[RMDB]
RNA sequence: GGGAACGACUCGAGUAGAGUCGAAAAGGAGAAUGCAGUGCAGGGGCCGCAGGAGCCAAAAAGGGGCACUGGUCCUGCGAAGAGUGGCUCUGUCCAUCCCUGCCUUCCAGUAUGUGCCCACUGUGACCAGAGCUCCAUUUCUCAAAAGAAGCCAGUGCAUAUGUUGGCACUUCGGUGCCAACAUAUGAAAAGAAACAACAACAACAAC
Reactivity to 2A3 in 0.01 (KOAc 150mM, MgCl2 10mM, bicine 150mM(pH8.5), 24C), signal-to-noise 1, nucleotides 027 to 156: g020g000a000g030a210a040u220g020c080a070g030u100g120c000a000g000g000g030g010c000c000g000c040a020g000g040a070g100c030c030a020a090a070a000a030g030g000g010g000c010a010c000u050g000g020u070c000c010u020g000c110g020a090a070g040a090g100u090g010g000c010u050c090u300g070u070c040c000a050u070c010c010c000u010g000c000c010u060u000c030c010a020g000u100a090u190g130u060g040c020c010c000a000c020u050g050u110g020a050c050c110a090g020a040g050c020u000c030c000a010u030u090u040c040u020c000a080a150a000a010g080a070a060g000c000c020a020g100u050g090